[RMDB]
RNA sequence: GGGAACGACUCGAGUAGAGUCGAAAAAAGGAUGAUGUCCACCACGCCGUGCUGUCACGUUCUCGGUACCCUCGAUUUCCGUCUCUUCUUGCAUGCGUAUCCAACCGCCUCGCGGCUCCGCCGACCCGAUAAAAGGGCACUUCGGUGCCCUUUUAUCAAAAGAAACAACAACAACAAC
Reactivity to DMS in 0.01 (KOAc 150mM, MgCl2 10mM, bicine 150mM(pH8.5), 24C), signal-to-noise 1, nucleotides 027 to 126: a110a080g000g000a020u000g000a070u030g020u020c050c020a110c070c010a130c120g010c080c070g030u010g010c050u000g000u000c050a110c010g010u000u010c020u000c050g020g010u000a050c050c030c050u000c060g000a140u000u000u020c030c020g010u020c000u000c030u000u000c050u010u000g000c080a060u020g020c020g000u000a060u000c040c030a050a180c080c060g000c040c020u010c080g030c050g000g000c040u000c030c030g000c070c020g010a070c050c010c040

The record gives the reactivity of an RNA of 177 nucleotides to DMS. It was measured as part of the RMDB library RFMREP. For DMS the reverse transcriptase was MarathonRT. High DMS reactivity at an A or C suggests that its Watson-Crick edge is free. Values are in units of 0.01, from 0 to 300, in steps of 10. The reactions ran in a buffer of 150 mM KOAc, 10 mM MgCl2 and 150 mM bicine (pH 8.5), at 24 C.